[RMDB]
RNA sequence: GGGAACGACUCGAGUAGAGUCGAAAAAGUUACGUAUGUUCUUCAUAGAGAUAAAUUAUUAUGCCUUACGCCUGGUUGACCAGACUUUAGAGGUCGCUGUUCUGAGCUUAACGUCUGUUUUAACUGACACUCCUUCGAACUUCGGUUCGAAGGAGUGAAAAGAAACAACAACAACAAC
Reactivity to DMS in 0.01 (KOAc 150mM, MgCl2 10mM, bicine 150mM(pH8.5), 24C), signal-to-noise 1, nucleotides 027 to 126: a100g010u000u030a100c080g010u000a030u000g000u000u000c050u000u000c000a090u000a080g000a070g020a140u040a100a020a040u010u010a060u000u000a080u030g050c020c000u000u060a110c220g000c020c050u000g000g000u060u030g000a040c110c060a110g020a060c090u020u000u000a100g000a120g000g000u010c020g000c030u020g030u000u000c050u060g040a030g010c060u000u020a040a180c300g000u000c040u030g030u000u010u020u010a050a160c050u000g010a300
Reactivity to 2A3 in 0.01 (KOAc 150mM, MgCl2 10mM, bicine 150mM(pH8.5), 24C), signal-to-noise 1, nucleotides 027 to 126: a080g050u020u020a000c080g060u000a170u080g080u000u230c030u090u150c080a270u300a000g260a080g020a030u270a250a300a050u070u080a000u000u090a000u090g000c000c000u210u050a000c000g050c000c050u080g090g080u130u000g030a030c030c030a000g090a090c000u000u080u210a090g000a000g110g000u120c020g020c000u080g000u060u000c000u000g000a000g000c000u070u110a040a040c000g000u020c000u050g000u060u000u000u020a030a030c020u000g090a000